[RMDB]
RNA sequence: GGGAACGACUCGAGUAGAGUCGAAAAUUAGCUUUAAAGCUUUCUAUGACGCUAACAAAACUCUUGAAAUAACUUUCACAAACUGUUUGAAUAUCUUGAAGUGCAGGAAGCAGAUCUUUGCUGCUUGCGGUCCUUUAUACUUCGGUAUAAAGGACCGAAAAGAAACAACAACAACAAC
Reactivity to 2A3 in 0.01 (KOAc 150mM, MgCl2 10mM, bicine 150mM(pH8.5), 24C), signal-to-noise 4, nucleotides 027 to 126: u050u010a020g000c040u060u190u170a140a130a010g010c000u090u110u000c040u060a160u100g060a030c050g010c020u050a070a020c030a070a080a050a040c040u060c020u050u140g070a020a060a020u110a060a090c010u070u110u100c070a050c050a040a200a040c060u080g050u110u020u050g080a060a030u090a090u150c080u060u150g040a080a020g040u040g030c000a010g070g040a020a020g000c020a030g010a120u050c090u100u090u180g090c000u010g000c000u010u010g030
Reactivity to DMS in 0.01 (KOAc 150mM, MgCl2 10mM, bicine 150mM(pH8.5), 24C), signal-to-noise 2, nucleotides 027 to 126: u000u020a040g000c030u010u130u010a180a020a020g010c090u000u000u000c000u000a050u070g020a030c090g020c010u000a070a050c150a130a020a040a130c050u010c090u010u000g000a050a090a060u010a100a130c140u000u000u020c010a060c200a090a100a150c050u000g000u000u000u030g020a180a030u010a010u010c030u030u000g000a040a130g000u010g000c030a090g000g000a030a020g030c020a000g000a100u050c220u000u030u020g020c010u000g020c050u000u000g000